Source information:
The data come from the RNA Mapping Database (RMDB), library OK2TRN. Chemical mapping of a 177-nucleotide RNA with 2A3 and DMS.
[RMDB]
RNA sequence: GGGAACGACUCGAGUAGAGUCGAAAAUAUCGGAGCGACUGCAGGACUUGUCUCUAUAAAAUGAUGGAAAACUAUAAACAUACUACGGUGCUGCUGGAUGAAGCCGUUAAUGGCCUCAAUAUCCGUCUAAUUCGUUCUGAUUCGUCAGAACGAAUUAAAAAGAAACAACAACAACAAC
Reactivity to 2A3 in 0.01 (KOAc 150mM, MgCl2 10mM, bicine 150mM(pH8.5), 24C), signal-to-noise 3, nucleotides 027 to 126: u160a030u050c040g030g010a020g030c030g110a070c050u040g010c050a030g010g010a030c030u070u140g020u060c010u000c000u060a100u080a110a140a050a020u130g020a030u040g000g030a110a110a050a070c060u060a080u160a260a180a000c030a030u150a100c050u040a020c050g020g000u020g030c020u010g000c010u040g040g010a050u050g020a030a000g020c010c000g000u010u060a080a090u180g010g000c000c000u000c000a020a030u070a040u130c020c010g010u000c030
Reactivity to DMS in 0.01 (KOAc 150mM, MgCl2 10mM, bicine 150mM(pH8.5), 24C), signal-to-noise 4, nucleotides 027 to 126: u000a080u000c050g010g010a100g020c100g000a070c080u010g010c030a060g020g000a060c050u000u010g030u010c050u020c050u010a110u010a050a090a100a100u010g000a050u010g000g010a060a070a070a090c130u000a090u000a110a080a100c070a080u010a070c090u010a040c060g030g000u000g020c040u010g010c030u000g000g000a090u000g000a030a090g010c010c020g010u000u010a100a120u020g000g020c000c030u010c020a070a110u000a110u010c010c020g000u010c140
The RNA was probed in 150 mM KOAc, 10 mM MgCl2 and 150 mM bicine (pH 8.5) at 24 C.